RNA sequence: GGGAACGACUCGAGUAGAGUCGAAAAUAGUCCGGCACCGGCUUCCCAGUGAUCCGGGACUCCGGUACGGAUCACUGUGCCGACUCCUGGUACGACCACGUCGGGUCGCAGGUGCGUCGGAACCGACGCUAGGGGAUAUCUUCGGAUAUCCCCUAGCAAAAGAAACAACAACAACAAC
Reactivity to DMS in 0.01 (KOAc 150mM, MgCl2 10mM, bicine 150mM(pH8.5), 24C), signal-to-noise 7, nucleotides 027 to 126: u030a080g010u010c010c000g000g020c020a050c030c030g010g020c040u000u000c060c070c010a040g010u000g010a020u010c000c010g000g000g010a030c030u010c180c140g000g020u000a060c000g000g000a020u000c040a020c010u000g000u000g000c010c000g000a240c140u040c120c080u020g010g000u010a090c050g000a040c030c060a130c250g010u020c090g020g000g010u000c040g010c020a020g010g020u000g000c070g010u040c000g010g000a080a070c020c030g010a130c180
Reactivity to 2A3 in 0.01 (KOAc 150mM, MgCl2 10mM, bicine 150mM(pH8.5), 24C), signal-to-noise 9, nucleotides 027 to 126: u120a010g070u030c020c000g010g010c020a020c020c020g030g010c030u080u060c010c020c000a000g010u020g010a020u010c010c000g010g020g100a040c020u040c060c140g110g010u030a010c000g000g000a010u020c000a000c010u020g030u060g040c000c000g030a040c020u090c010c020u080g050g040u170a120c070g030a050c030c020a090c140g140u090c100g070g000g010u040c020g010c030a010g020g030u040g050c040g080u110c000g010g040a080a130c030c010g000a020c060
An RNA of 177 nucleotides, treated with DMS and 2A3 and read out base by base. For 2A3, 16,954 sequencing reads were counted. The reactions ran in a buffer of 150 mM KOAc, 10 mM MgCl2 and 150 mM bicine (pH 8.5), at 24 C. For DMS the reverse transcriptase was MarathonRT.